[RMDB]
RNA sequence: GGGAACGACUCGAGUAGAGUCGAAAACCCGUUUCGUCUUGUACGAAUCACUCUUGAACGAACUUAAAAUUGCAUCAUACGUCACGGUAGGUUUCGUCUUGCUGUGCGUACGUUGCACACCAAUUAUUGAACAAAUUCGGUUCGCCGAAUUUGUUCAAAAAGAAACAACAACAACAAC
Reactivity to DMS in 0.01 (KOAc 150mM, MgCl2 10mM, bicine 150mM(pH8.5), 24C), signal-to-noise 1, nucleotides 027 to 126: c000c000c000g000u000u000u030c020g000u000c020u000u000g000u010a010c000g000a060a010u010c040a130c080u010c050u000u000g000a110a100c090g000a050a130c140u000u010a040a100a080a100u020u010g000c000a010u000c020a070u000a010c030g010u010c020a000c040g000g020u000a030g000g000u000u050u000c090g010u010c020u000u030g030c030u000g040u000g020c010g000u000a010c040g030u000u010g000c020a070c250a090c170c140a020a120u000u000a110u000
Reactivity to 2A3 in 0.01 (KOAc 150mM, MgCl2 10mM, bicine 150mM(pH8.5), 24C), signal-to-noise 6, nucleotides 027 to 126: c010c000c000g010u020u010u020c000g000u000c030u080u220g050u150a010c010g050a050a020u060c040a100c090u130c030u070u170g100a160a080c070g030a060a040c040u110u190a070a060a120a200u230u080g000c020a000u000c000a020u000a000c010g080u060c270a000c010g000g000u000a000g020g020u080u300u200c110g150u080c060u000u000g010c000u000g000u000g000c000g000u010a000c020g000u010u020g000c000a010c000a020c030c030a120a140u170u120a100u060